[RMDB]
RNA sequence: GGGAACGACUCGAGUAGAGUCGAAAACUGCUCCGGUUCGCCGGAGCAGAAAUGGAUCCAAUGGAAUCCAAAAUGGAAAUGGAGAUCCAAAAAGGGAUAACAAAACCAGGAUGUUCGCAUCCUGGAAGUCUUAAUGCUUGUUCGCAAGCAUUAAGACAAAAGAAACAACAACAACAAC
Reactivity to 2A3 in 0.01 (KOAc 150mM, MgCl2 10mM, bicine 150mM(pH8.5), 24C), signal-to-noise 1, nucleotides 027 to 126: c000u000g000c010u000c000c000g030g060u060u040c170g010c040c000g000g000a000g000c000a000g000a000a000a000u040g030g030a030u000c000c000a000a050u060g020g030a040a020u000c020c020a050a000a030a200u260g110g040a050a090a030u020g030g010a130g030a190u000c000c000a000a000a000a100a000g150g010g000a100u100a160a070c060a040a060a010a030c020c000a000g000g000a000u000g020u030u070c170g000c140a000u000c000c000u020g000g010a010a000
Reactivity to DMS in 0.01 (KOAc 150mM, MgCl2 10mM, bicine 150mM(pH8.5), 24C), signal-to-noise 3, nucleotides 027 to 126: c000u000g000c000u000c000c030g010g010u000u000c220g040c000c000g020g000a020g030c020a000g000a000a040a090u010g000g000a070u010c010c010a120a170u010g000g000a080a180u000c010c010a000a050a170a120u000g010g020a080a130a130u000g000g000a050g010a120u000c000c000a000a000a060a150a160g000g000g000a090u010a060a070c080a060a050a120a150c000c010a000g010g010a010u000g010u000u000c230g030c000a000u000c000c000u000g000g020a020a020